This 177-nucleotide RNA was probed chemically with 2A3 and DMS. DMS adducts were read by reverse transcription with MarathonRT. It was measured as part of the RMDB library M2PK90.
RNA sequence: GGGAACGACUCGAGUAGAGUCGAAAAUAAGAGCAUGUACGAAUCACGAUAUGUGAGUUCCUGGUGAAUCCCGGGUACAAGGAAAGGUAUUAAUCUCCCACUGCGUUCCCUUGCAGUAGGGAUAUAAUGUCAAGACAACAUUCGUGUUGUCUUGACAAAAAGAAACAACAACAACAAC
Reactivity to 2A3 in 0.01 (KOAc 150mM, MgCl2 10mM, bicine 150mM(pH8.5), 24C), signal-to-noise 1, nucleotides 027 to 126: u170a050a070g070a050g130c090a050u060g000u080a030c030g100a160a080u040c080a030c000g040a060u130a040u300g000u030g010a060g040u100u050c000c020u100g000g000u070g080a090a060u100c090c000c030g000g000g000u020a050c090a060a040g060g000a040a070a120g100g000u090a050u150u080a190a030u040c010u000c100c010c000a020c000u010g000c030g010u010u010c000c000c000u000u100g000c000a000g000u080a130g010g030g000a000u040a010u010a010a020
Reactivity to DMS in 0.01 (KOAc 150mM, MgCl2 10mM, bicine 150mM(pH8.5), 24C), signal-to-noise 2, nucleotides 027 to 126: u020a100a090g000a150g010c090a040u000g000u000a050c040g020a090a150u000c010a030c050g010a130u010a020u000g010u000g010a060g010u000u000c020c000u000g000g040u000g000a100a100u010c090c020c020g010g010g020u000a020c040a100a040g010g010a070a040a040g010g010u010a050u010u000a040a100u010c100u010c000c000c000a050c020u000g000c000g000u010u000c040c030c050u000u020g000c000a010g040u000a050g030g010g010a020u000a010u000a070a140